[RMDB]
RNA sequence: GGGAACGACUCGAGUAGAGUCGAAAAGCAUCUUGCUUCGGCAAGAUGCAAAUAUCGGUCAGUGCUUGCAGCUAGUCGUAAAUGCUAACUGGCCUUACGCUAAAACGAAUGCGUUCGCGCAUUCGAACUCGGGAUGAAAGUUCGCUUUCAUCCCGAGAAAAGAAACAACAACAACAAC
Reactivity to DMS in 0.01 (KOAc 150mM, MgCl2 10mM, bicine 150mM(pH8.5), 24C), signal-to-noise 2, nucleotides 027 to 126: g040c010a010u000c000u000u000g000c020u000u020c290g040g020c000a000a020g010a030u000g010c000a020a020a090u000a030u020c180g030g000u000c000a020g000u000g020c130u000u000g030c040a020g030c300u000a040g000u010c200g000u000a040a040a080u010g030c020u000a050a030c010u000g040g030c010c010u000u010a020c150g000c090u010a050a070a170a230c030g000a010a010u000g020c010g020u000u010c300g030c000g000c000a000u010u000c010g030a020a040
Reactivity to 2A3 in 0.01 (KOAc 150mM, MgCl2 10mM, bicine 150mM(pH8.5), 24C), signal-to-noise 2, nucleotides 027 to 126: g000c010a000u000c000u000u000g000c010u060u070c090g100g010c000a000a020g000a020u000g000c010a000a010a000u050a000u010c030g000g020u000c010a000g020u000g060c080u130u120g030c000a020g030c020u150a070g100u180c090g060u090a110a060a070u090g000c020u030a050a030c010u000g000g000c000c010u000u050a070c050g000c060u180a070a060a060a080c030g010a000a010u030g010c000g000u000u070c290g000c020g010c030a000u000u000c000g000a020a010

The record gives the reactivity of an RNA of 177 nucleotides to DMS and 2A3.
Values cover nucleotides 27 to 126.
The data come from the RNA Mapping Database (RMDB), library M2PK50.
2A3 adducts were read by reverse transcription with SuperScript II with manganese.
DMS adducts were read by reverse transcription with MarathonRT.